[RMDB]
RNA sequence: GGGAACGACUCGAGUAGAGUCGAAAAGGGGUCUCCCGAAGAACUCGCUAGCGAUAUUUGUCAGAGCUACUGAAGCCUCCACGGUAGCUCUUGGAUUUAAUAUCGGAAGCGAGGGAGGGAGACGGAGGCACCCAAAACUUCCGGCUUCGGCCGGAAGGGCCCAAAAUAAGUUCGCUUAUUUUGGGCCAAAAGAAACAACAACAACAAC
Reactivity to 2A3 in 0.01 (KOAc 150mM, MgCl2 10mM, bicine 150mM(pH8.5), 24C), signal-to-noise 1, nucleotides 027 to 156: g070g010g060g000u020c010u000c000c000c000g080a210a060g010a030a020c000u010c000g000c000u000a030g230c000g010a000u000a010u030u080u300g060u040c020a010g000a000g000c000u010a000c000u020g010a080a060g050c040c000u000c010c000a020c000g000g000u020a010g000c000u000c020u000u100g020g000a000u060u030u300a060a010u010a000u020c000g010g130a080a050g010c000g000a000g000g000g010a040g000g000g000a000g000a000c010g000g020a000g000g040c000a040c000c000c000a010a090a020a050c000u100u150c000c000g000g050c010u090u120c250g090g000c000c000g000g000a000a000g010
Notes
Structure probing data (2A3) for a 207-nucleotide construct. Values are in units of 0.01, from 0 to 300, in steps of 10. 2A3 adducts were read by reverse transcription with SuperScript II with manganese.